[RMDB]
RNA sequence: GGGAACGACUCGAGUAGAGUCGAAAAACAAAAUCUUUGACAACUCCGCCAGUAAAAGAGAAACUACAAGACCUGCUAGGAUCCUCAAAUCCUUCCUACACAGGAAUAACAGACCUUUUAGAUACUGCCUACACACAUAUUUCGAUAUGUGUGUAGGAAAAGAAACAACAACAACAAC
Reactivity to DMS in 0.01 (KOAc 150mM, MgCl2 10mM, bicine 150mM(pH8.5), 24C), signal-to-noise 3, nucleotides 027 to 126: a110c050a060a050a110a070u000c060u000u000u010g020a090c080a090a060c060u000c060c020g010c070c040a060g030u000a020a050a040a060g000a070g000a100a040a080c040u010a060c080a080a110g000a100c050c010u000g030c090u010a080g010g000a050u000c030c050u000c210a030a080a090u000c070c020u000u000c020c000u010a070c160a060c100a020g010g000a110a030u000a070a160c060a060g010a080c050c010u000u000u000u000a090g000a130u000a060c090u000g010
Reactivity to 2A3 in 0.01 (KOAc 150mM, MgCl2 10mM, bicine 150mM(pH8.5), 24C), signal-to-noise 3, nucleotides 027 to 126: a010c040a010a120a060a060u060c060u080u090u140g030a010c020a030a080c080u030c080c040g070c050c020a030g050u080a030a070a120a010g060a010g060a060a110a010c020u090a020c010a040a090g080a110c010c010u000g040c040u070a020g050g010a050u020c000c000u050c040a040a090a090u040c000c000u020u010c010c010u060a040c110a000c000a050g060g020a020a050u090a110a000c030a030g110a140c010c010u080u060u080u090a070g030a090u080a090c030u110g040